[RMDB]
RNA sequence: GGGAACGACUCGAGUAGAGUCGAAAAGAAAGAAAGAACCCUUCCCGCGGGGCUGGAUCUUCCAGAUGGUGCGGGCCGGGACAAGCCGGAGAGUGUCCCGGUUUCAGAAACAACCUUCGGCAGCCUAACUAGACUACCCACUUCGGUGGGUAGUCAACUUUGUCAGAAUGUUCGCAUUCUGACAAAGAAAAGAAACAACAACAACAAC
Reactivity to 2A3 in 0.01 (KOAc 150mM, MgCl2 10mM, bicine 150mM(pH8.5), 24C), signal-to-noise 1, nucleotides 027 to 156: g000a000a030a000g020a030a040a030g030a150a270c020c000c000u000u000c000c000c000g000c000g000g000g000g000c020u000g010g000a170u170c070u170u020c160c000a000g000a020u010g020g120u040g000c000g000g000g000c000c000g000g010g000a000c000a000a000g000c000c010g000g010a000g000a000g000u000g000u000c000c000c000g000g000u010u000u010c020a010g060a010a010a020c070a030a010c010c000u000u010c000g000g020c000a050g010c000c070u060a050a060c040u030a080g000a000c000u000a000c000c000c000a000c030u040u040c160g110g000u000g000g000g000u000a000g000u000c000a000a000
Overview: Chemical mapping of a 207-nucleotide RNA with 2A3. The RNA was probed in 150 mM KOAc, 10 mM MgCl2 and 150 mM bicine (pH 8.5) at 24 C. Source: RMDB library M2RFPK, as collected in RNAgym.